Conditions: 150 mM KOAc, 10 mM MgCl2 and 150 mM bicine (pH 8.5), 24 C. An RNA of 177 nucleotides, treated with 2A3 and DMS and read out base by base. Reactivities are given for positions 27 through 126. 2A3 adducts were read by reverse transcription with SuperScript II with manganese.

RNA sequence: GGGAACGACUCGAGUAGAGUCGAAAAGAUAUGGACGCUGCACAGGGAGUCGCUACAUCGGAAACGAUGUACGACAUCGAUCUGUGUGCGUCCUAAGUCAAAAUCGUAGCUCUUCGGAGCUACGAAAGGUACGACAUUGGUUCGCCAAUGUCGUACCAAAAGAAACAACAACAACAAC
Reactivity to 2A3 in 0.01 (KOAc 150mM, MgCl2 10mM, bicine 150mM(pH8.5), 24C), signal-to-noise 1, nucleotides 027 to 126: g000a000u040a020u090g010g000a000c010g020c050u190g000c040a020c000a010g060g070g130a250g050u000c010g030c120u000a000c000a020u010c010g000g000a020a000a010c000g010a000u010g000u000a000c000g030a000c010a030u080c080g090a120u100c020u000g020u000g020u010g000c010g000u000c000c000u000a000a010g030u000c030a060a020a020a300u060c010g010u000a000g000c020u000c000u020u050c300g190g010a030g000c000u020a000c010g000a000a000a000
Reactivity to DMS in 0.01 (KOAc 150mM, MgCl2 10mM, bicine 150mM(pH8.5), 24C), signal-to-noise 1, nucleotides 027 to 126: g030a010u000a300u000g000g000a040c000g000c020u020g000c010a000c000a020g000g040g030a130g030u000c000g000c300u030a010c000a000u000c000g020g000a040a040a170c010g020a010u000g000u000a000c000g020a000c000a140u010c300g000a150u010c010u010g000u000g020u000g000c000g030u010c000c000u000a000a060g010u020c010a110a150a090a250u000c000g000u000a000g010c000u000c010u020u020c210g000g000a010g020c000u000a000c000g000a000a060a080